[RMDB]
RNA sequence: GGGAACGACUCGAGUAGAGUCGAAAACGUGUCCGUCGGCGUAGCCGACAACAUGCCCAGGUAGCCCAGACCUCCAAGGCUACGGUGCGUUGCGACGCACGGUCUGAUUCUUCACAACGACGUUCACAAGAUCGGAUCACUUUCGAGUGAUCCGAAAGACUAUUCUCCACUUCGGUGGAGAAUAGUCAAAAGAAACAACAACAACAAC
Reactivity to 2A3 in 0.01 (KOAc 150mM, MgCl2 10mM, bicine 150mM(pH8.5), 24C), signal-to-noise 1, nucleotides 027 to 156: c070g010u030g050u140c180c110g000u000c010g000g000c170g200u200a080g050c020c030g000a010c000a020a000c000a000u050g010c000c000c000a030g060g060u010a000g030c000c030c100a050g000a000c000c000u000c000c070a000a000g000g000c000u010a000c050g030g010u000g000c000g040u050u060g020c250g070a030c000g000c030a000c010g000g060u030c000u000g000a070u130u060c130u150u150c130a070c020a300a040c110g080a010c080g040u100u190c050a000c010a250a040g010a190u030c000g000g000a000u000c000a000c000u080u160u060c130g090a000g010u000g000a000u000c000c000g000a000a000a000